The data come from the RNA Mapping Database (RMDB), library OK2TRN.
The record gives the reactivity of an RNA of 177 nucleotides to DMS.
The RNA was probed in 150 mM KOAc, 10 mM MgCl2 and 150 mM bicine (pH 8.5) at 24 C.
DMS adducts were read by reverse transcription with MarathonRT.
For DMS, 728 sequencing reads were counted.
[RMDB]
RNA sequence: GGGAACGACUCGAGUAGAGUCGAAAAGGGGACAUGUGGCAGGGUUGUCACAGUGAGGGGUAGGGGUACUCCCUGCAUCAAGAGGCCAGAGAUGCUGCUAAAAAUCCUACGAUAUACAGAACAGCCCUCGUGAAGAGAGUUUCGACUCUCUUCACGAAAAAGAAACAACAACAACAAC
Reactivity to DMS in 0.01 (KOAc 150mM, MgCl2 10mM, bicine 150mM(pH8.5), 24C), signal-to-noise 1, nucleotides 027 to 126: g040g010g000g030a110c120a020u020g000u000g000g000c010a090g010g000g000u010u000g030u000c080a020c020a070g000u030g020a140g000g020g010g030u050a080g000g000g010g010u010a100c110u000c000c010c010u000g020c080a050u010c060a100a120g040a080g030g050c000c070a120g010a170g000a040u000g000c050u000g000c120u040a020a030a010a060a070u010c000c020u010a090c070g020a100u000a050u020a120c180a010g000a070a070c120a050g020c010c010c030